This 177-nucleotide RNA was probed chemically with DMS and 2A3.
In probing experiments dimethyl sulfate is read out at A N1 and C N3, which are open when not base-paired.
The DMS profile rests on 2,782 reads.
2A3 is a SHAPE reagent: it acylates the 2'-hydroxyl of flexible nucleotides of all four kinds.

RNA sequence: GGGAACGACUCGAGUAGAGUCGAAAAAAGGACGGCGCAACCUGGUUGCGCACCAGCGCAUUUGGUGACGACAAGGACCGCGUCGUGAUCAAGAGCGACGGCAAACCGGCAUAUAUCGCCGGUGAUCCAGCGGAUAGAGAUUCGUCUCUAUCCGCUGAAAAGAAACAACAACAACAAC
Reactivity to DMS in 0.01 (KOAc 150mM, MgCl2 10mM, bicine 150mM(pH8.5), 24C), signal-to-noise 4, nucleotides 027 to 126: a050a080g000g010a050c010g010g000c000g010c020a120a160c000c020u000g020g020u000u000g020c120g000c000a010c010c000a070g020c300g010c180a140u000u000u000g010g020u000g010a050c010g000a030c020a040a060g010g000a130c170c200g020c060g000u000c000g030u000g000a090u000c050a080a050g000a130g000c040g000a090c130g000g000c170a080a150a050c020c000g000g020c000a130u010a200u010a130u030c150g010c000c000g000g000u000g000a060u000c080
Reactivity to 2A3 in 0.01 (KOAc 150mM, MgCl2 10mM, bicine 150mM(pH8.5), 24C), signal-to-noise 2, nucleotides 027 to 126: a000a000g100g020a010c040g030g000c020g000c020a030a030c010c070u070g100g050u070u030g080c180g000c120a020c000c000a010g070c130g050c130a160u110u060u090g000g000u030g030a000c020g000a010c030a040a050g080g010a150c100c080g010c020g000u000c000g000u000g030a080u120c070a090a000g010a000g040c030g090a100c050g050g030c010a030a060a060c010c010g010g040c010a040u270a010u050a040u300c070g000c000c000g000g000u000g010a000u040c010